[RMDB]
RNA sequence: GGGAACGACUCGAGUAGAGUCGAAAAACUAGUAUGUACAGGGGUGAGUUGACCUGUCAUCUGGACUGCUGACCAUCAACUCACCGGUCAGCUGGAUGAUGUCCACAGAGUACGACAUCAGUACUCAGUGUAUUGAGUAGUUCGCUGCUCGAUACACAAAAGAAACAACAACAACAAC
Reactivity to 2A3 in 0.01 (KOAc 150mM, MgCl2 10mM, bicine 150mM(pH8.5), 24C), signal-to-noise 9, nucleotides 027 to 126: a000c010u020a010g060u090a080u110g080u080a010c010a020g080g020g040g050u090g050a090g030u040u030g060a050c010c030u020g010u000c000a010u000c010u010g000g050a030c040u040g000c000u000g010a000c010c010a040u070c030a040a080c050u020c070a050c030c020g000g000u000c000a000g000c010u020g040g020a050u090g010a030u090g060u020c010c000a060c050a060g020a000g010u030a010c050g070a030c090a140u100c040a050g010u010a010c000u000c020a010
Reactivity to DMS in 0.01 (KOAc 150mM, MgCl2 10mM, bicine 150mM(pH8.5), 24C), signal-to-noise 9, nucleotides 027 to 126: a130c030u000a020g010u040a030u000g000u050a010c010a020g000g000g000g020u010g010a070g030u010u000g000a060c040c050u010g000u000c010a010u010c020u010g000g010a120c080u010g000c030u000g000a010c010c160a190u020c080a030a050c080u020c070a080c170c110g000g000u000c000a020g000c000u010g000g010a100u010g010a080u020g000u000c010c020a110c210a080g000a040g010u010a020c030g000a140c180a090u040c110a110g010u000a020c010u000c020a150